Chemical mapping of a 207-nucleotide RNA with DMS and 2A3.
RNA sequence: GGGAACGACUCGAGUAGAGUCGAAAACUAUUUCAAAGAAUUCAAACUUGGGGGAAUGCCUUGUUGAAUAGCCGGUCGCAAGACUGUGAUUCUUCAAGUGUAACCUCCUCUCAAAUCAGCGAUAUCAAACGUACCAUUCCGUGAAACACCGGGGUAUGAUGAUUAUGUUGUUCGCAACAUAAUCAUCAAAAGAAACAACAACAACAAC
Reactivity to DMS in 0.01 (KOAc 150mM, MgCl2 10mM, bicine 150mM(pH8.5), 24C), signal-to-noise 1, nucleotides 027 to 156: c080u010a080u000u000u000c030a060a140a080g030a060a060u010u020c060a080a120a050c080u000u000g000g000g050g020g000a050a230u000g000c010c000u010u010g010u010u000g000a080a030u000a090g040c120c000g030g000u000c000g000c240a060a220g000a030c010u010g030u020g000a110u000u010c000u000u010c000a010a010g020u080g020u000a100a200c000c010u000c020c000u000c020u000c020a050a130a110u000c070a060g030c080g000a040u000a130u010c030a050a130a160c150g000u000a060c030c040a090u000u000c020c010g040u000g000a130a020a100c030a080c050c030g010g000g000g030u000a090u000
Reactivity to 2A3 in 0.01 (KOAc 150mM, MgCl2 10mM, bicine 150mM(pH8.5), 24C), signal-to-noise 6, nucleotides 027 to 156: c020u070a100u140u200u160c070a060a100a050g060a080a140u210u140c100a150a130a150c120u160u130g000g010g000g010g020a040a030u100g010c010c000u000u010g000u010u010g000a010a010u030a080g150c070c020g010g000u000c010g000c080a090a030g020a000c000u020g040u080g080a010u000u000c010u000u000c000a000a000g010u020g020u250a030a040c000c000u000c010c000u000c000u000c000a120a230a140u060c030a030g060c010g060a020u040a040u200c090a130a100a040c060g030u020a040c010c020a050u150u030c010c000g000u020g030a040a020a020c050a030c080c060g000g000g020g010u050a070u070
Reactivities are rounded to 0.1 and cut off at 0 and 3. The data come from the RNA Mapping Database (RMDB), library PDB130. For DMS, 1,701 sequencing reads were counted.